[RMDB]
RNA sequence: GGGAACGACUCGAGUAGAGUCGAAAACAACCCAACUCCUACUCCAUACGUCCUCGUCGUACAGAACGGUAACAUGUUUUCCGAACAUCCGCGCUUGGGUAUACGAGUAUACACCUUACCCAACCCUCCAACCACCUAAAGUUCGCUUUAGGUGGAACGAUGGUAAUCAGUUCGCUGAUUACCAUCGAAAAGAAACAACAACAACAAC
Reactivity to 2A3 in 0.01 (KOAc 150mM, MgCl2 10mM, bicine 150mM(pH8.5), 24C), signal-to-noise 8, nucleotides 027 to 156: c030a010a090c000c000c010a040a040c030u030c010c010u050a060c030u020c020c000a040u020a110c040g050u040c010c020u020c020g060u020c010g020u050a050c050a090g080a170a020c030g040g030u090a070a040c030a140u130g060u040u050u060u040c040c030g010a040a020c020a080u050c020c020g060c020g030c080u030u040g030g000g020u040a040u020a060c080g020a030g100u020a030u030a060c080a050c020c010u020u040a040c000c000c000a020a020c020c000c000u000c000c010a040a100c000c000a000c000c000u010a010a000a010g020u060u110c150g090c100u000u000u010a000g000g000u000g000g000a000a000
Reactivity to DMS in 0.01 (KOAc 150mM, MgCl2 10mM, bicine 150mM(pH8.5), 24C), signal-to-noise 2, nucleotides 027 to 156: c030a100a300c010c000c010a140a150c060u000c040c020u010a040c030u000c010c000a110u000a020c060g010u010c020c030u000c050g000u010c040g000u000a100c040a050g010a100a130c010g000g020u010a050a110c040a030u000g010u010u030u010u000c050c030g010a090a070c020a090u000c030c030g020c040g020c060u000u010g020g020g020u000a040u000a090c080g000a080g020u000a150u000a100c040a090c000c030u000u020a050c010c000c010a050a070c020c000c000u000c000c000a160a170c030c010a010c010c000u010a000a030a020g010u000u000c230g040c010u030u000u000a020g000g030u010g000g010a010a050